[RMDB]
RNA sequence: GGGAACGACUCGAGUAGAGUCGAAAAACCUCGCUGCCGGCGAAACCCAGAUUCGCGGCGAAGCGGGCUAUGAGAUCAGUGAUGAUCCGGAGGCGAAUAUUCGCCUCAGUUUUGGCAUUGAGCGAUACUGCCUAGUAUCAUUCGUGAUACUAGGCAGAAAAGAAACAACAACAACAAC
Reactivity to DMS in 0.01 (KOAc 150mM, MgCl2 10mM, bicine 150mM(pH8.5), 24C), signal-to-noise 4, nucleotides 027 to 126: a110c090c000u010c030g030c020u000g000c000c010g020g030c000g010a010a050a090c090c100c190a120g000a240u000u000c010g020c010g000g000c020g000a050a060g010c010g000g000g010c100u010a050u010g000a210g010a020u000c010a020g010u000g000a110u000g000a010u000c020c020g000g000a010g010g010c000g010a030a220u010a180u010u000c000g000c000c000u010c000a000g000u000u000u000u000g000g010c010a040u000u000g000a030g000c030g000a130u010a140
Reactivity to 2A3 in 0.01 (KOAc 150mM, MgCl2 10mM, bicine 150mM(pH8.5), 24C), signal-to-noise 2, nucleotides 027 to 126: a000c010c000u010c000g020c010u010g000c000c010g300g080c010g020a050a040a040c060c020c030a010g040a300u040u000c010g000c010g030g000c030g020a100a010g010c030g020g030g000c030u050a090u260g120a160g010a140u010c010a010g010u000g060a080u000g000a010u010c020c000g040g000a000g000g000c020g030a020a060u300a210u300u050c000g030c000c000u000c000a000g000u000u020u040u100g020g000c010a010u030u060g020a050g000c000g030a030u070a140
This 177-nucleotide RNA was probed chemically with DMS and 2A3. The RNA was probed in 150 mM KOAc, 10 mM MgCl2 and 150 mM bicine (pH 8.5) at 24 C.